[RMDB]
RNA sequence: GGGAACGACUCGAGUAGAGUCGAAAAUUUUAGCUAUCGUGCCGAACGUUUACUUUCAGCAGCCGCCGUCUAAAGGUAUGACGUAUCCGUGCAUCGUCUACAAACGAGACGCGGAAUCAACCGACCAUGCGAACAACUCGGUGUAUCGAAGUAAAAACUACUAUGGGUGGUUCGCCACCCAUAGUAGAAAAGAAACAACAACAACAAC
Reactivity to 2A3 in 0.01 (KOAc 150mM, MgCl2 10mM, bicine 150mM(pH8.5), 24C), signal-to-noise 2, nucleotides 027 to 156: u040u030u050u050a060g000c020u020a030u300c030g040u020g030c000c000g050a110a030c040g060u090u030u100a100c070u080u260u150c080a030g000c030a000g030c020c010g070c050c050g000u030c020u060a070a070a040g050g000u090a100u160g000a000c050g010u040a030u040c030c040g040u080g040c040a080u060c000g010u000c030u070a080c050a050a110a000c030g030a000g040a020c010g000c010g000g020a020a050u060c050a060a070c010c000g100a090c030c030a030u070g020c010g020a030a000c010a020a000c030u010c000g030g040u030g030u070a100u140c060g040a020a000g010u100a000a020a000a000a080
Reactivity to DMS in 0.01 (KOAc 150mM, MgCl2 10mM, bicine 150mM(pH8.5), 24C), signal-to-noise 1, nucleotides 027 to 156: u000u000u000u000a130g000c050u000a130u010c050g020u010g040c000c000g040a090a090c120g000u000u000u010a030c060u000u010u000c040a120g030c000a090g000c030c070g020c020c040g000u030c050u000a000a160a130g020g020u000a040u010g070a010c050g010u000a300u000c000c060g050u020g000c060a090u010c010g030u040c110u000a090c140a120a140a070c050g000a040g010a080c000g030c000g010g000a010a080u010c060a070a050c040c050g000a020c040c050a090u000g040c040g080a020a050c000a060a140c000u010c030g000g060u000g010u000a110u000c040g000a070a050g000u040a020a040a050a170a190